This 177-nucleotide RNA was probed chemically with DMS and 2A3. The DMS profile rests on 1,420 reads. 2A3 adducts were read by reverse transcription with SuperScript II with manganese. For 2A3, 1,020 sequencing reads were counted. The RNA was probed in 150 mM KOAc, 10 mM MgCl2 and 150 mM bicine (pH 8.5) at 24 C.
RNA sequence: GGGAACGACUCGAGUAGAGUCGAAAAAUCGAUCGAUAUCGCGCGCGGCUACGAUCGGCAUUAAUCGUACGUAAUUACGGCAUAUCGGCAUUAAUGCAUGCUACGUAUACGAUAUGCAUUAUAAUGCCAGAGGGCUCUAGUUCGCUAGAGCCCUCUGAAAAGAAACAACAACAACAAC
Reactivity to DMS in 0.01 (KOAc 150mM, MgCl2 10mM, bicine 150mM(pH8.5), 24C), signal-to-noise 2, nucleotides 027 to 126: a070u000c060g010a030u000c030g020a060u000a010u000c120g000c060g010c060g030c100g000g000c070u010a050c040g000a090u000c060g020g010c220a080u010u000a030a020u010c020g000u000a030c060g020u000a100a140u000u000a070c100g010g000c090a030u000a100u010c100g000g000c010a000u010u000a050a030u000g010c040a020u000g000c110u010a040c160g020u010a090u020a100c110g030a060u000a000u000g000c010a020u000u010a050u000a050a010u010g020c030
Reactivity to 2A3 in 0.01 (KOAc 150mM, MgCl2 10mM, bicine 150mM(pH8.5), 24C), signal-to-noise 1, nucleotides 027 to 126: a010u050c030g010a040u000c080g060a010u020a010u170c030g040c030g030c000g010c060g080g110c030u020a010c030g040a040u060c000g040g000c000a030u080u160a030a070u080c000g000u030a090c060g020u030a080a130u220u080a030c010g060g000c030a010u040a050u240c020g010g000c020a030u000u030a090a030u070g030c020a000u020g040c060u050a070c050g210u220a110u020a180c060g080a150u010a000u130g000c000a000u000u040a010u030a100a020u030g040c000